[RMDB]
RNA sequence: GGGAACGACUCGAGUAGAGUCGAAAAGAUAUGGAGAAAUUUGUCAGUUCUGUGCCUAUCCAGUUGGUUCGGAAACGAACCAACUGGCCGAGGGCACAAUGAACUUGGAUUUAAUUUCUCCUAAGUCCUCCUAAUAUUUCUUCGGAAAUAUUAGGAGAAAAGAAACAACAACAACAAC
Reactivity to DMS in 0.01 (KOAc 150mM, MgCl2 10mM, bicine 150mM(pH8.5), 24C), signal-to-noise 2, nucleotides 027 to 126: g010a120u000a300u010g000g010a030g000a010a010a020u000u000u000g000u010c010a070g020u000u020c020u000g000u000g060c010c000u010a300u000c000c000a010g030u000u000g010g000u000u000c000g010g000a120a110a300c010g000a020a000c000c000a000a010c000u000g000g020c300c210g010a120g010g020g000c020a010c010a020a040u010g000a000a000c000u000u010g010g000a050u010u000u000a010a020u000u000u000c000u000c020c020u010a020a120g010u000c050
Reactivity to 2A3 in 0.01 (KOAc 150mM, MgCl2 10mM, bicine 150mM(pH8.5), 24C), signal-to-noise 2, nucleotides 027 to 126: g050a050u120a100u300g000g000a010g010a010a050a020u050u060u000g050u020c040a040g000u020u000c010u040g000u020g050c000c020u050a080u020c000c000a020g000u010u000g010g010u010u010c000g040g050a110a120a150c020g000a000a070c000c000a020a000c000u010g020g020c030c020g300a300g000g000g000c010a010c010a000a030u150g000a010a000c010u040u110g150g010a010u300u200u170a000a010u000u000u020c010u000c000c000u010a100a010g040u010c000
Notes
An RNA of 177 nucleotides, treated with DMS and 2A3 and read out base by base. For 2A3, 2,991 sequencing reads were counted. For 2A3 the reverse transcriptase was SuperScript II with manganese. The reactions ran in a buffer of 150 mM KOAc, 10 mM MgCl2 and 150 mM bicine (pH 8.5), at 24 C.